[RMDB]
RNA sequence: GGGAACGACUCGAGUAGAGUCGAAAAAAAAAAGAUAUGGAUCUCUAGCGUGUCCGAAGAACAUGGUGAGGUAUAGUCGGAAACGACUAUAUGGAGCCAUGGGAGGAUCGGGUCCUAAGUCAAAAAACUUAGACUAUGUGUUCGCACAUAGUCUAAGAAAAGAAACAACAACAACAAC
Reactivity to DMS in 0.01 (KOAc 150mM, MgCl2 10mM, bicine 150mM(pH8.5), 24C), signal-to-noise 1, nucleotides 027 to 126: a000a050a120a110a070a000g030a010u000a300u020g000g000a000u000c010u000c120u010a150g050c200g010u000g000u000c000c000g000a080a070g000a130a080c000a000u000g000g000u000g000a300g020g000u000a000u000a030g010u000c000g010g000a100a040a140c000g020a020c030u000a000u000a010u000g000g020a300g000c000c000a000u000g000g000g030a110g020g000a020u000c000g030g010g010u010c000c000u000a030a110g000u010c010a000a090a070a070a030a060
Reactivity to 2A3 in 0.01 (KOAc 150mM, MgCl2 10mM, bicine 150mM(pH8.5), 24C), signal-to-noise 1, nucleotides 027 to 126: a000a000a000a000a000a000g070a030u120a050u090g010g010a000u000c090u070c190u270a120g160c050g150u230g040u130c000c040g120a160a050g000a040a000c000a010u020g000g000u170g020a070g120g000u030a010u000a000g000u020c020g060g000a110a070a030c020g010a000c000u000a000u010a010u020g030g060a010g000c060c010a000u010g010g000g020a050g000g000a020u010c020g000g000g000u030c000c040u020a130a050g050u060c090a030a020a000a040a070a150
An RNA of 177 nucleotides, treated with DMS and 2A3 and read out base by base. For 2A3 the reverse transcriptase was SuperScript II with manganese. Conditions: 150 mM KOAc, 10 mM MgCl2 and 150 mM bicine (pH 8.5), 24 C.